Chemical mapping of a 177-nucleotide RNA with DMS. The DMS profile rests on 519 reads. Conditions: 150 mM KOAc, 10 mM MgCl2 and 150 mM bicine (pH 8.5), 24 C. It was measured as part of the RMDB library OK2TST.
RNA sequence: GGGAACGACUCGAGUAGAGUCGAAAAGGUCAGCUCCACCGAAGGGGCUGCCAUGGAAGAGCCCAAGAGGAGAUCAGCGCAAUUGUCAGCUAAACCUCCUGCAAAAGUGGAAGCGAAGCCGAAAAAGUAACUAACGGUCGUUCGCGACCGUUAGUUAAAAAGAAACAACAACAACAAC
Reactivity to DMS in 0.01 (KOAc 150mM, MgCl2 10mM, bicine 150mM(pH8.5), 24C), signal-to-noise 1, nucleotides 027 to 126: g010g030u000c070a300g000c000u000c000c000a020c030c060g030a150a180g010g020g000g010c000u030g030c060c020a160u000g030g000a060a060g000a090g000c020c030c010a290a000g000a030g000g000a020g000a020u000c300a050g030c010g000c110a160a110u000u030g050u000c060a010g070c010u000a010a100a130c110c060u000c000c010u000g000c080a120a120a120a050g000u000g060g000a060a090g010c000g040a180a120g020c000c010g030a010a090a070a070a120g030